RNA sequence: GGGAACGACUCGAGUAGAGUCGAAAAGAUAUGGAAACGAGGUACAGAACGAUGAAAUCGGAAACGAUGGAGUUCGUACUACCCACCGUUUCCUAAGUCAAAAGACUAUCCGUUCGCGGAUAGUCAAGUGAUAAGAGAGCUUCGGCUCUCUUAUCACAAAAGAAACAACAACAACAAC
Reactivity to DMS in 0.01 (KOAc 150mM, MgCl2 10mM, bicine 150mM(pH8.5), 24C), signal-to-noise 2, nucleotides 027 to 126: g040a030u000a300u000g000g010a000a010a010c010g010a050g020g010u000a060c110a140g000a090a000c010g020a060u000g000a090a160a030u000c000g000g020a130a080a180c000g010a020u000g020g000a130g000u000u000c010g000u000a020c200u000a050c010c050c030a280c060c030g020u000u000u000c000c000u020a010a130g040u000c030a060a120a120a110g000a010c000u000a000u000c000c000g010u010u000c290g030c000g020g000a010u000a010g000u000c000a020a020
Reactivity to 2A3 in 0.01 (KOAc 150mM, MgCl2 10mM, bicine 150mM(pH8.5), 24C), signal-to-noise 1, nucleotides 027 to 126: g010a040u120a040u210g000g030a020a000a000c000g000a040g020g000u030a070c170a300g050a100a010c030g070a120u040g040a000a000a000u010c000g000g000a060a060a030c000g000a010u010g000g020a030g050u020u030c000g000u000a050c020u020a020c020c020c000a100c040c020g000u010u010u000c000c000u020a130a060g080u050c050a000a040a040a120g000a010c000u000a000u000c020c000g030u020u080c300g010c000g110g010a030u010a040g000u000c000a000a000